[RMDB]
This 177-nucleotide RNA was probed chemically with DMS. The RNA was probed in 150 mM KOAc, 10 mM MgCl2 and 150 mM bicine (pH 8.5) at 24 C. It was measured as part of the RMDB library OK2TRN.
RNA sequence: GGGAACGACUCGAGUAGAGUCGAAAAAAUACACAAGCAGGUAGCUACAUGGUGGAAAUUAACAUGCAGUGAUACUAUGUACUGUAUACAGUGUUCCAACAUUCUAAAGGGUUACUGGGAGGGGACACAUCAUUGACGAAUUCGUUCGUCAAUGAUGAAAAGAAACAACAACAACAAC
Reactivity to DMS in 0.01 (KOAc 150mM, MgCl2 10mM, bicine 150mM(pH8.5), 24C), signal-to-noise 5, nucleotides 027 to 126: a060a060u000a050c110a070c100a090a090g010c070a070g010g020u000a070g010c060u000a140c080a020u000g000g030u000g010g000a050a040a070u010u010a070a070c130a020u000g010c010a020g000u000g000a100u000a080c180u020a090u010g030u000a020c030u000g010u000a030u010a070c190a070g020u000g010u000u000c020c010a050a030c060a040u000u010c180u020a070a070a130g000g000g020u000u010a050c120u010g000g000g010a080g010g000g000g010a110c150a130